[RMDB]
RNA sequence: GGGAACGACUCGAGUAGAGUCGAAAAGAGUUGGUCGCCGCGUCCUGGCCGGCUGGGGUCAACCCCUUGUGGACAUACGGCGGCGGCACACCUGGUGAGGCCAUCGCCGCCUACCGGCGUGCGAUCGCUACACGUCCUUUUUCGAAAGGACGUGUAGAAAAGAAACAACAACAACAAC
Reactivity to 2A3 in 0.01 (KOAc 150mM, MgCl2 10mM, bicine 150mM(pH8.5), 24C), signal-to-noise 5, nucleotides 027 to 126: g090a000g050u130u120g020g000u020c010g000c010c010g000c020g030u030c010c060u020g020g030c000c000g060g010c040u040g000g000g000g030u260c090a160a300c010c010c000c020u010u070g030u020g020g020a030c020a050u160a040c050g080g000c010g000g000c000g000g010c040a020c010a000c030c030u080g040g060u070g070a050g020g010c020c030a040u040c010g000c020c000g000c000c010u100a220c060c070g000g000c020g030u170g000c010g000a020u030c050g000
Reactivity to DMS in 0.01 (KOAc 150mM, MgCl2 10mM, bicine 150mM(pH8.5), 24C), signal-to-noise 3, nucleotides 027 to 126: g010a090g000u010u010g010g020u000c000g030c000c020g000c050g030u010c050c070u000g000g020c010c000g010g000c060u000g000g000g000g000u030c270a160a170c190c010c010c000u000u000g010u020g000g000a030c020a070u010a180c140g020g010c000g000g020c000g000g020c010a050c060a040c040c020u000g010g030u020g000a100g000g020c040c050a080u010c050g010c030c040g000c000c000u020a110c230c230g000g000c030g010u060g020c020g020a040u020c110g020